RNA sequence: GGGAACGACUCGAGUAGAGUCGAAAAGAUAUGGAAUGUCUGAUGUAUGAACUACGAGGUCGGAAACGACACUCGCAUACACAAUGGACAUUCCUAAGUCAAACCUGUCCCCUUCGGGGGACAGGAACCUUUAAAAGUCCUUCGGGACUUUUAAAGGAAAAGAAACAACAACAACAAC
Reactivity to 2A3 in 0.01 (KOAc 150mM, MgCl2 10mM, bicine 150mM(pH8.5), 24C), signal-to-noise 1, nucleotides 027 to 126: g000a010u070a000u140g000g030a000a000u010g020u060c040u120g160a110u030g100u030a030u000g010a070a150c020u180a010c300g000a010g030g030u000c050g010g060a090a100a010c000g020a010c280a300c190u000c000g020c020a000u020a000c020a000c020a000a160u290g020g010a000c000a000u010u050c000c000u010a070a010g000u000c020a190a000a000c000c000u000g000u000c010c000c000c000u010u060c140g190g050g000g000g020a010c000a000g000g000a000a000
Reactivity to DMS in 0.01 (KOAc 150mM, MgCl2 10mM, bicine 150mM(pH8.5), 24C), signal-to-noise 1, nucleotides 027 to 126: g000a010u000a300u030g010g000a050a030u000g010u010c000u000g010a110u000g010u020a050u000g000a070a050c160u020a270c030g000a000g020g010u000c000g020g010a140a080a240c000g000a000c000a070c000u000c030g010c010a020u000a010c030a000c100a190a050u000g020g000a000c000a010u000u000c000c000u000a000a060g000u000c030a090a180a140c000c000u000g000u010c000c000c000c000u010u000c250g020g000g010g010g010a000c020a000g000g000a020a030
Conditions: 150 mM KOAc, 10 mM MgCl2 and 150 mM bicine (pH 8.5), 24 C. An RNA of 177 nucleotides, treated with 2A3 and DMS and read out base by base. Values cover nucleotides 27 to 126. Source: RMDB library TTRDEL, as collected in RNAgym. The DMS profile rests on 1,023 reads.